[RMDB]
RNA sequence: GGGAACGACUCGAGUAGAGUCGAAAAGUAUUCAUUCUCCUUUCUCGAUAGAGAUUGGAGUCAUACAACCCCAGAAACCAUUCCUUAUACCUUGAGUAUUGCGGAAUUCAGUUUAGCGUGCAUGCUCUUAAUGGGUGCACCUUCGGGUGCACCCAAAGAUACUAUGUAUGUUCGCAUACAUAGUAUCAAAAGAAACAACAACAACAAC
Reactivity to 2A3 in 0.01 (KOAc 150mM, MgCl2 10mM, bicine 150mM(pH8.5), 24C), signal-to-noise 1, nucleotides 027 to 156: g000u010a030u050u190c120a020u090u020c020u030c000c000u000u040u000c000u000c000g240a300u130a300g000a000g020a000u000u010g000g000a000g010u000c000a000u000a010c000a000a050c070c000c000c030a060g180a140a040a030c000c020a050u010u060c010c000u020u110a050u020a060c000c030u170u290g090a070g120u000a020u030u070g000c040g040g000a030a030u080u060c010a030g060u020u060u130a060g030c090g070u110g040c090a060u040g030c000u020c070u170u130a180a100u080g030g000g000u010g060c000a000c000c000u020u080c230g090g010g010u000g080c030a010c040c000c020a000a000a000
Reactivity to DMS in 0.01 (KOAc 150mM, MgCl2 10mM, bicine 150mM(pH8.5), 24C), signal-to-noise 2, nucleotides 027 to 156: g000u000a040u000u010c040a210u010u000c010u000c000c020u000u010u000c010u000c010g020a300u000a150g000a030g020a010u000u010g010g000a030g030u000c300a030u000a030c000a090a220c000c000c010c060a200g000a110a060a030c030c030a080u000u010c010c020u000u010a050u000a010c010c010u000u030g030a180g020u000a020u000u000g040c150g000g010a060a030u000u010c100a060g010u000u000u000a120g000c080g020u000g050c030a060u000g010c020u000c030u000u000a110a190u000g000g010g080u010g040c010a010c000c010u000u000c250g060g060g030u000g030c000a010c010c010c010a000a010a070
The record gives the reactivity of an RNA of 207 nucleotides to 2A3 and DMS.
2A3 adducts were read by reverse transcription with SuperScript II with manganese.